[RMDB]
RNA sequence: GGGAACGACUCGAGUAGAGUCGAAAAGAUAUGGACCGAGAUACGAACUACUCAGCUGCAUCGGAAACGAUGUGGCUGAGCGUAUCGUUUGACGUCCUAAGUCGGUAGCAUCGGUUCGCCGAUGCAAGAGAGGAUAAGCGUUCGCGCUUAUCCUCUCAAAAGAAACAACAACAACAAC
Reactivity to DMS in 0.01 (KOAc 150mM, MgCl2 10mM, bicine 150mM(pH8.5), 24C), signal-to-noise 3, nucleotides 027 to 126: g010a030u000a180u000g000g010a020c000c160g010a130g010a020u000a000c000g010a050a020c060u020a300c020u000c000a010g010c000u010g000c000a000u010c000g010g000a050a010a090c010g000a010u000g010u000g000g000c000u000g030a000g010c060g000u000a020u000c000g010u000u020u000g010a260c300g000u000c000c000u000a020a120g000u000c000g000g010u020a180g000c010a000u010c010g010g000u000u020c210g010c010c000g010a000u000g000c010a040a020
Reactivity to 2A3 in 0.01 (KOAc 150mM, MgCl2 10mM, bicine 150mM(pH8.5), 24C), signal-to-noise 2, nucleotides 027 to 126: g000a000u020a030u040g010g010a000c030c130g140a150g000a260u060a010c010g000a010a020c060u200a040c000u300c000a000g000c000u000g000c000a000u000c000g030g000a000a010a000c000g010a010u000g010u000g030g020c000u000g000a000g000c000g000u010a000u010c000g000u050u110u270g120a100c110g020u010c000c000u010a020a010g020u000c040g030g170u150a020g000c000a000u010c000g010g040u080u090c280g050c060c000g000a000u020g000c000a010a000

The record gives the reactivity of an RNA of 177 nucleotides to DMS and 2A3. The DMS profile rests on 3,022 reads. Source: RMDB library TTRDEL, as collected in RNAgym. Reactivities are given for positions 27 through 126. The reactions ran in a buffer of 150 mM KOAc, 10 mM MgCl2 and 150 mM bicine (pH 8.5), at 24 C.